[RMDB]
RNA sequence: GGGAACGACUCGAGUAGAGUCGAAAAGCAUCCGGGGACAUUUGAGGCAAUGGAUUCUGAUUUCGCAAUUCGUCUUCCACCUGCUCAACGGUUUGCGAGUCAUCAAUGACGCCCUGGGCCAUCAUCCACCUGGCAAGGAGUUCGCUCCUUGCCAGGUAAAAGAAACAACAACAACAAC
Reactivity to 2A3 in 0.01 (KOAc 150mM, MgCl2 10mM, bicine 150mM(pH8.5), 24C), signal-to-noise 1, nucleotides 027 to 126: g010c020a070u010c030c060g000g010g000g010a020c000a090u110u120u170g030a070g030g090c050a070a070u100g130g030a050u220u080c020u130g060a040u300u130u010c020g000c080a020a030u060u040c000g020u040c050u080u000c050c040a120c000c070u050g030c030u070c130a000a010c000g060g000u000u000u000g000c000g000a000g040u040c030a050u070c020a080a060u040g030a060c060g040c030c010c060u000g020g040g020c060c040a050u090c030a040u070c050c010
Reactivity to DMS in 0.01 (KOAc 150mM, MgCl2 10mM, bicine 150mM(pH8.5), 24C), signal-to-noise 1, nucleotides 027 to 126: g030c070a150u000c010c000g010g020g000g040a050c050a100u010u000u000g010a100g010g000c070a090a070u000g010g000a080u030u020c100u020g000a030u000u010u010c030g000c030a050a040u000u000c020g000u000c120u000u000c030c050a050c060c060u010g000c070u000c100a150a030c030g000g000u000u000u000g000c030g000a080g030u000c000a030u000c110a030a060u000g000a160c110g000c030c010c000u020g020g010g030c130c040a130u000c070a070u000c050c060

Record summary: Structure probing data (2A3 and DMS) for a 177-nucleotide construct. For DMS, 956 sequencing reads were counted. Conditions: 150 mM KOAc, 10 mM MgCl2 and 150 mM bicine (pH 8.5), 24 C. Source: RMDB library OK2TRN, as collected in RNAgym.